[RMDB]
RNA sequence: GGGAACGACUCGAGUAGAGUCGAAAAUCCAGUACGUUCGCGUACUGGAAAAGUCGCGGCUUGAGGGCGUGUACGGCAGCGCACACACACCACCCUCAAGCCAAAGUCCGUACUUCGGUACGGACAAGAUCUCAAUACGGUUCGCCGUAUUGAGAUCAAAAGAAACAACAACAACAAC
Reactivity to DMS in 0.01 (KOAc 150mM, MgCl2 10mM, bicine 150mM(pH8.5), 24C), signal-to-noise 4, nucleotides 027 to 126: u000c000c000a000g010u000a010c000g030u000u030c140g050c000g030u000a000c000u000g010g010a020a020a040a090g000u000c080g030c300g020g000c000u000u000g000a010g000g000g020c300g000u000g020u000a010c040g000g010c170a100g000c030g020c030a060c050a050c040a110c120a150c190c140a180c020c000c000u000c000a010a000g000c010c000a010a020a070g000u000c000c000g000u000a010c010u000u010c150g010g010u000a020c000g000g000a000c020a040a060
Reactivity to 2A3 in 0.01 (KOAc 150mM, MgCl2 10mM, bicine 150mM(pH8.5), 24C), signal-to-noise 4, nucleotides 027 to 126: u010c000c000a000g010u000a000c000g000u010u060c200g000c010g100u000a010c010u000g000g020a020a010a000a010g070u060c040g010c090g120g000c010u000u010g000a010g000g000g010c020g000u000g020u030a030c020g020g040c060a120g080c060g020c070a030c000a000c000a000c010a020c130c010a040c000c000c000u000c000a000a000g000c000c000a000a000a000g000u000c000c000g010u000a000c000u020u050c210g080g000u000a000c000g000g000a000c000a000a020